Chemical mapping of a 177-nucleotide RNA with DMS and 2A3. For 2A3 the reverse transcriptase was SuperScript II with manganese. For 2A3, 2,927 sequencing reads were counted. Reactivities are given for positions 27 through 126. The reactions ran in a buffer of 150 mM KOAc, 10 mM MgCl2 and 150 mM bicine (pH 8.5), at 24 C.

RNA sequence: GGGAACGACUCGAGUAGAGUCGAAAAUGGACUAGCCGUAGUGGCGAACAACGACCUGAUAGGGUGCCGCAGAGACCCACUAUUAGGCUAGUAUAAAAAUCUCUGCGGAAUAUAGACAGAACAUUAAAUAUUACCGCAUGUUCGCAUGCGGUAAUAUAAAAGAAACAACAACAACAAC
Reactivity to DMS in 0.01 (KOAc 150mM, MgCl2 10mM, bicine 150mM(pH8.5), 24C), signal-to-noise 4, nucleotides 027 to 126: u080g020g010a100c000u020a000g020c000c020g010u010a010g000u020g010g010c300g000a220a150c180a120a110c130g000a090c020c000u000g010a190u040a110g000g000g000u010g010c020c000g080c020a050g000a020g030a110c300c020c010a000c000u000a000u030u070a160g010g010c020u000a000g000u010a000u000a000a020a020a000a020u010c000u000c000u010g000c010g000g020a060a080u050a090u030a080g020a120c230a070g010a090a070c150a070u050u020a050a160
Reactivity to 2A3 in 0.01 (KOAc 150mM, MgCl2 10mM, bicine 150mM(pH8.5), 24C), signal-to-noise 3, nucleotides 027 to 126: u170g120g020a000c000u000a000g000c000c000g000u010a000g070u030g000g010c050g060a080a020c040a020a050c010g100a020c000c000u020g040a140u210a140g100g030g000u070g080c010c000g000c010a000g000a000g000a020c000c000c000a010c030u000a050u070u120a020g000g000c000u000a000g000u000a010u000a020a010a000a000a000u000c000u000c000u000g000c000g000g090a110a000u280a010u050a030g130a050c090a030g100a160a000c010a050u180u210a090a190